[RMDB]
RNA sequence: GGGAACGACUCGAGUAGAGUCGAAAAAGCAUUGCUUUGCUAAUUAAUAGGGCUUAACUUUUCAUUUUCACCUAGCAAAUCUGUUUCUUCAUAGGUAAGGAAUUCUUGCAAUGUGCAUGGUGGUAAUAACAGCUAUUUUUGGAAAUAUCAGCAGGAGGGUAAACUGGAGUUUCGACUCCAGUUUACCAAAAGAAACAACAACAACAAC
Reactivity to 2A3 in 0.01 (KOAc 150mM, MgCl2 10mM, bicine 150mM(pH8.5), 24C), signal-to-noise 2, nucleotides 027 to 156: a000g080c070a120u050u080g000c030u100u140u040g000c010u040a170a120u240u180a100a100u140a080g030g020g000c000u020u080a040a020c030u060u070u120u130c040a120u050u100u060u070c040a050c040c050u030a020g060c040a040a010a100u040c040u060g020u020u060u040c030u020u030c030a070u090a130g040g060u120a000a010g030g010a030a080u200u080c020u030u050g000c020a020a110u060g000u000g000c000a020u080g050g030u020g000g010u040a090a020u090a200a000c020a020g000c060u040a090u030u160u070u090u050g000g000a000a030a060u130a020u010c030a000g070c010a000g030g030a050g010
Notes:
This 207-nucleotide RNA was probed chemically with 2A3. Source: RMDB library OK3TST, as collected in RNAgym. The RNA was probed in 150 mM KOAc, 10 mM MgCl2 and 150 mM bicine (pH 8.5) at 24 C.